RNA sequence: GGGAACGACUCGAGUAGAGUCGAAAAAUGCAUUCUUAAAUUUCCUUGGUAGCUUUACUCUGUGCUUCCAUGAUAUGAGUGAAUGCAUAGAAAUUGCAGAGGAAUCCAAAGGACUGUGCUUCACCUAGACAAUGGAACGUUUCGACGUUCCAUUGUCAAAAGAAACAACAACAACAAC
Reactivity to 2A3 in 0.01 (KOAc 150mM, MgCl2 10mM, bicine 150mM(pH8.5), 24C), signal-to-noise 4, nucleotides 027 to 126: a000u070g000c000a000u030u000c030u080u120a120a150a130u060u030u000c020c000u030u020g130g000u080a030g000c000u060u030u120a120c050u080c020u070g060u030g020c000u050u000c000c000a020u040g040a040u110a090u210g080a060g070u110g030a010a010u090g000c000a000u000a000g030a000a120a020u060u100g000c020a020g010a000g000g040a030a060u010c030c050a120a050a030g050g010a050c070u080g020u040g010c060u000u000c010a140c070c000u010a030
Reactivity to DMS in 0.01 (KOAc 150mM, MgCl2 10mM, bicine 150mM(pH8.5), 24C), signal-to-noise 1, nucleotides 027 to 126: a030u030g000c020a060u010u010c010u020u000a030a160a080u000u000u010c020c050u000u010g000g000u000a020g020c020u010u060u050a050c110u000c060u000g050u000g020c010u000u010c000c000a090u000g040a090u020a080u020g000a160g020u010g000a030a000u020g010c000a020u000a040g040a080a100a040u010u020g050c040a100g000a030g000g000a040a070u000c150c090a100a070a110g000g000a130c090u000g000u020g050c040u000u010c020a080c020c020u000a080
Annotation
Structure probing data (2A3 and DMS) for a 177-nucleotide construct. For 2A3 the reverse transcriptase was SuperScript II with manganese. Conditions: 150 mM KOAc, 10 mM MgCl2 and 150 mM bicine (pH 8.5), 24 C. Source: RMDB libraries RFM100 and RFMREP, as collected in RNAgym.